[RMDB]
RNA sequence: GGGAACGACUCGAGUAGAGUCGAAAAGAAGUGGCAGGGACAUGCCCCAAAAGCUCGUUCUAGCAACAUAUGUUUGGCUAGUUCGAGCGAUUAGUCUGGAGGAGCGUCCUCUCGCCUCUUAACGAGAAUUAAUAGUGGCGUUCGCGCCACUAUUAAUAAAAGAAACAACAACAACAAC
Reactivity to DMS in 0.01 (KOAc 150mM, MgCl2 10mM, bicine 150mM(pH8.5), 24C), signal-to-noise 4, nucleotides 027 to 126: g010a010a010g000u000g010g030c030a090g000g000g010a020c020a110u020g010c000c010c010c010a020a060a170a190g000c000u000c000g000u000u000c000u000a000g030c000a060a010c010a250u050a100u070g000u030u010u010g010g020c000u000a000g010u000u000c000g010a020g010c000g000a030u050u040a040g000u050c140u030g000g020a160g030g000a070g020c100g020u000c000c000u010c060u020c120g020c000c000u000c000u000u020a100a120c100g000a130g000a120
Reactivity to 2A3 in 0.01 (KOAc 150mM, MgCl2 10mM, bicine 150mM(pH8.5), 24C), signal-to-noise 5, nucleotides 027 to 126: g100a020a010g010u010g000g000c000a000g000g000g000a000c030a050u240g090c000c020c000c000a030a040a030a010g000c000u000c000g000u010u000c000u000a000g020c010a020a070c030a060u300a080u300g090u130u120u110g140g020c000u000a000g000u000u000c010g000a000g010c000g000a000u000u020a010g120u010c130u070g040g070a170g050g050a070g060c050g020u000c010c010u020c020u020c070g010c000c010u020c000u020u020a060a040c030g020a010g120a220

Chemical mapping of a 177-nucleotide RNA with DMS and 2A3. The data come from the RNA Mapping Database (RMDB), library OK1LIB. DMS adducts were read by reverse transcription with MarathonRT.